[RMDB]
RNA sequence: GGGAACGACUCGAGUAGAGUCGAAAAAGGAGAAUAUGCGCUUACAUAGUAAAUGGGUAUUAGUUUUUCCGUUUUUAAGAGGAAUAGGAACACGAGGUUAGUCGAGAGGACCACAUGUAGGGAGCUAGACAGGACACUGCCCAUGACGCAGUGACUGACUGGGUGGACUUUUCGAAGUCCACCCAGUAAAAGAAACAACAACAACAAC
Reactivity to 2A3 in 0.01 (KOAc 150mM, MgCl2 10mM, bicine 150mM(pH8.5), 24C), signal-to-noise 1, nucleotides 027 to 156: a000g030g000a010g030a120a010u220a020u120g110c030g000c120u060u020a000c000a140u070a040g160u140a120a190a200u240g020g000g060u070a050u190u100a080g200u100u020u010u020u140c000c000g000u000u090u100u300u160a060a040g010a020g020g000a020a120u120a090g000g000a120a000c010a020c060g010a000g150g000u110u160a120g000u070c070g000a000g000a000g160g050a010c030c000a040c020a050u030g000u000a030g000g040g000a020g000c000u070a060g010a050c000a000g030g000a010c000a000c000u040g000c000c070c090a040u190g000a030c050g000c000a000g000u000g010a020c000u010g000